[RMDB]
Conditions: 150 mM KOAc, 10 mM MgCl2 and 150 mM bicine (pH 8.5), 24 C.
Chemical mapping of a 177-nucleotide RNA with 2A3 and DMS.
For 2A3 the reverse transcriptase was SuperScript II with manganese.
For DMS the reverse transcriptase was MarathonRT.
The DMS profile rests on 661 reads.
RNA sequence: GGGAACGACUCGAGUAGAGUCGAAAAACACAAUCAUGGCUUCAAAAACUGUGGGCACAGCUGAUGAAAAGCUUCGAAAGAAAUCAUCAUUCUAUCAAUCAUACCUCAGACGCACACAAUCAAUGGACAGCAAAAUUAUCUUCGGAUAAUUUUGCUGAAAAGAAACAACAACAACAAC
Reactivity to 2A3 in 0.01 (KOAc 150mM, MgCl2 10mM, bicine 150mM(pH8.5), 24C), signal-to-noise 1, nucleotides 027 to 126: a000c020a000c010a000a040u070c030a060u050g070g000c030u040u010c030a050a070a070a100a070c060u060g030u030g080g000g020c050a030c010a090g070c030u080g000a100u040g040a060a110a040a070g010c000u010u070c090g120a150a060a070g060a010a100a030u080c020a010u010c000a000u120u050c050u100a130u050c010a110a010u020c010a080u080a130c030c000u000c050a010g010a070c020g070c040a000c000a010c010a080a060u100c010a010a130u050g020g000a000
Reactivity to DMS in 0.01 (KOAc 150mM, MgCl2 10mM, bicine 150mM(pH8.5), 24C), signal-to-noise 1, nucleotides 027 to 126: a090c050a110c110a080a060u010c050a050u010g000g000c060u000u000c090a080a030a110a160a100c130u000g020u000g010g040g010c070a070c090a070g000c140u000g000a100u000g000a040a070a090a120g020c170u000u000c080g000a050a130a070g000a020a060a040u000c120a050u000c020a120u000u000c020u000a060u030c070a070a000u020c020a020u000a130c070c070u020c020a020g020a130c190g000c020a040c050a050c110a100a020u000c130a030a110u000g000g010a250